[RMDB]
RNA sequence: GGGAACGACUCGAGUAGAGUCGAAAAGCUCAGGGGUUCGCCCCUGAGCAAAAGAUACCGGUCUCGGUAUCAAACUCAGUCCGACAGACCACAGGGAACUGAAAAGGGAGGGGUUCGCCCCUCCCAACAAAGGAAAUAAGUUCGCUUAUUUCCUUUGAAAAGAAACAACAACAACAAC
Reactivity to DMS in 0.01 (KOAc 150mM, MgCl2 10mM, bicine 150mM(pH8.5), 24C), signal-to-noise 4, nucleotides 027 to 126: g010c000u000c000a010g010g000g020g030u000u020c240g010c010c000c000c000u020g010a020g020c000a010a010a050a120g000a010u000a000c010c010g010g010u010c240u010c020g020g000u000a000u000c000a050a090a110c140u000c030a030g000u000c000c000g010a120c100a080g000a190c040c030a070c100a100g000g000g000a050a050c040u000g000a040a090a110a140g010g010g000a010g010g000g010g020u010u010c190g000c000c000c000c000u000c000c000c010a010a010
Reactivity to 2A3 in 0.01 (KOAc 150mM, MgCl2 10mM, bicine 150mM(pH8.5), 24C), signal-to-noise 2, nucleotides 027 to 126: g010c000u010c010a000g030g050g020g010u060u100c150g100c000c000c000c000u000g010a010g010c000a000a000a000a000g000a000u000a000c020c010g070g150u200c280u150c270g000g000u010a000u010c000a000a010a030c060u030c010a000g040u000c010c010g030a040c030a050g080a050c000c020a020c040a090g000g000g070a120a100c020u020g020a050a050a080a080g000g000g000a000g010g000g000g000u030u010c080g080c000c000c000c000u000c010c000c000a000a000

Chemical mapping of a 177-nucleotide RNA with DMS and 2A3. The data come from the RNA Mapping Database (RMDB), library M2PK50. 2A3 adducts were read by reverse transcription with SuperScript II with manganese. Conditions: 150 mM KOAc, 10 mM MgCl2 and 150 mM bicine (pH 8.5), 24 C.